RNA sequence: GGGAACGACUCGAGUAGAGUCGAAAAUUACCUUCAUAUUUUGCAAAACCUCUUAUCCAAUUGCGAGUGCAAAGUAGAGUUGGAACAUUCCAUUUAACAAUCAUAAUGGUCAUCUGGUGGGCUCUAGCUGAUUAAAUAGCUUCGGCUAUUUAAUCAGAAAAGAAACAACAACAACAAC
Reactivity to 2A3 in 0.01 (KOAc 150mM, MgCl2 10mM, bicine 150mM(pH8.5), 24C), signal-to-noise 2, nucleotides 027 to 126: u040u040a100c010c000u010u020c010a040u040a060u080u070u080u040g010c000a000a040a170a240c040c030u040c010u060u140a110u100c100c090a110a110u130u140g040c030g010a040g070u070g030c010a000a010a000g020u020a010g000a000g010u030u010g000g010a020a000c010a090u050u060c000c040a030u140u150u050a160a040c040a020a040u110c050a050u050a180a000u140g000g000u010c010a040u010c060u100g110g060u070g000g030g000c030u010c020u060a060g060
Reactivity to DMS in 0.01 (KOAc 150mM, MgCl2 10mM, bicine 150mM(pH8.5), 24C), signal-to-noise 3, nucleotides 027 to 126: u000u000a140c010c010u010u000c020a080u010a050u000u000u000u000g000c020a090a060a170a140c130c060u010c030u010u000a070u010c120c160a100a070u010u010g010c100g000a120g020u000g030c030a020a020a050g010u000a010g010a090g010u010u000g010g010a070a100c210a100u010u000c010c010a060u010u000u000a060a080c110a030a050u020c070a040u020a020a060u000g010g000u000c040a040u000c050u000g020g000u000g010g000g010c070u010c050u000a100g010